The record gives the reactivity of an RNA of 177 nucleotides to DMS and 2A3.
Conditions: 150 mM KOAc, 10 mM MgCl2 and 150 mM bicine (pH 8.5), 24 C.
For DMS the reverse transcriptase was MarathonRT.
RNA sequence: GGGAACGACUCGAGUAGAGUCGAAAAGAUAUGGACUCGCCACAAGGACGAAGAACAAGCUCGGAAACGAGCUUGGGAGUCUGUGGGCGAGUCCUAAGUCAAAGGUGACCGGUUCGCCGGUCACCAAGAAGGAUGAACUGUUCGCAGUUCAUCCUUCAAAAGAAACAACAACAACAAC
Reactivity to DMS in 0.01 (KOAc 150mM, MgCl2 10mM, bicine 150mM(pH8.5), 24C), signal-to-noise 2, nucleotides 027 to 126: g010a040u000a200u020g000g000a000c000u000c010g010c010c030a030c050a280a200g000g020a010c030g020a040a150g000a170a270c000a000a000g000c000u000c020g000g000a050a050a070c000g000a000g010c010u000u000g030g000g010a030g010u000c010u020g050u000g010g020g040c000g000a020g000u000c000c000u000a000a090g000u020c000a100a170a150g000g010u000g000a000c000c000g010g000u010u020c300g000c000c010g000g010u000c000a000c000c030a020a050
Reactivity to 2A3 in 0.01 (KOAc 150mM, MgCl2 10mM, bicine 150mM(pH8.5), 24C), signal-to-noise 1, nucleotides 027 to 126: g000a000u030a010u030g000g030a000c000u010c000g000c000c000a070c020a150a110g300g000a020c030g200a300a050g040a020a000c000a000a000g020c000u000c000g000g000a000a030a010c000g000a000g050c000u000u000g010g010g000a000g010u120c240u300g040u100g050g190g050c000g000a000g000u010c000c010u000a020a000g030u000c000a000a060a120g000g000u000g000a000c010c000g000g050u100u080c300g110c090c000g060g010u000c010a000c010c000a000a010
Reactivities are given for positions 27 through 126.
The data come from the RNA Mapping Database (RMDB), library TTRDES.
As a SHAPE reagent, 2A3 marks flexible, mostly unpaired nucleotides at the ribose 2'-OH.